[RMDB]
RNA sequence: GGGAACGACUCGAGUAGAGUCGAAAAGGGGUCGACGUUGUCAGGGAGCCAGCAUAGCGAAGAACUACCACUGAAGCCUCCACGGUGGUAGGGAGCUAUGGGCUCCCUUGGAUUUACGUCGACGGAGGCACCCAAAAGCCAAUCUUCGGAUUGGCAAGAAACAAACCUAGUUCGCUAGGUUUGUUUCAAAAGAAACAACAACAACAAC
Reactivity to DMS in 0.01 (KOAc 150mM, MgCl2 10mM, bicine 150mM(pH8.5), 24C), signal-to-noise 1, nucleotides 027 to 156: g050g000g040g020u010c010g070a040c000g030u000u010g040u000c070a050g040g020g000a030g010c000c010a200g040c040a070u000a000g050c000g000a110a160g010a130a240c020u000a010c010c030a020c010u010g000a030a070g000c000c020u000c000c010a300c040g010g040u000g010g050u000a010g020g020g000a040g060c000u000a010u000g030g020g000c040u000c000c000c000u020u010g000g000a080u000u020u000a060c030g020u010c000g010a070c010g000g050a040g050g050c060a130c000c000c000a070a040a110a170g010c000c010a000a030u000c010u030u000c300g020g000a060u000u000g000g000c010a050a000
Reactivity to 2A3 in 0.01 (KOAc 150mM, MgCl2 10mM, bicine 150mM(pH8.5), 24C), signal-to-noise 2, nucleotides 027 to 156: g070g000g000g010u000c000g000a000c010g010u040u040g070u090c230a160g020g000g000a000g000c020c030a090g140c000a140u000a000g000c010g200a300a000g010a000a040c000u000a000c000c000a000c000u030g040a220a010g020c000c000u000c010c000a000c000g020g000u000g000g000u000a010g000g000g000a000g000c000u000a000u010g000g000g000c030u020c000c010c010u000u060g000g000a000u050u010u170a010c000g000u000c000g000a000c000g000g000a010g000g000c000a040c000c000c030a060a130a030a010g020c010c000a000a000u000c010u020u110c300g110g010a010u000u000g010g000c000a000a020